An RNA of 207 nucleotides, treated with 2A3 and read out base by base. For 2A3 the reverse transcriptase was SuperScript II with manganese. The reactions ran in a buffer of 150 mM KOAc, 10 mM MgCl2 and 150 mM bicine (pH 8.5), at 24 C.

RNA sequence: GGGAACGACUCGAGUAGAGUCGAAAAGAAAUUACGUUUCCUUUAUACUUCUCAAACCGGGAUCAAGAGAAGCAAAGCAUCCCUCAUAUCCACGAUGGAGGGUGUCGUGGAGUAUACUGUACCAAAAAGAGCGAACACGGCUUCGGCCGUGUUCGAAGGAAUGCUUAAUCUUCGGAUUAAGCAUUCCAAAAGAAACAACAACAACAAC
Reactivity to 2A3 in 0.01 (KOAc 150mM, MgCl2 10mM, bicine 150mM(pH8.5), 24C), signal-to-noise 1, nucleotides 027 to 156: g040a010a030a000u200u130a040c030g000u010u020u040c000c000u030u120u090a080u030a090c010u000u040c000u000c010a190a050a110c100c060g050g000g070a040u120c040a180a040g010a030g010a040a040g080c070a130a000a000g000c000a030u000c030c090c000u050c020a100u130a040u110c020c010a010c040g000a020u060g050g010a030g130g000g000u070g010u000c000g000u000g000g020a010g010u000a020u000a080c110u050g140u080a000c000c070a000a150a040a040a000g060a030g040c000g000a000a000c000a000c000g000g000c000u020u030c140g040g000c010c000g000u000g000u000u000c000g000a000a010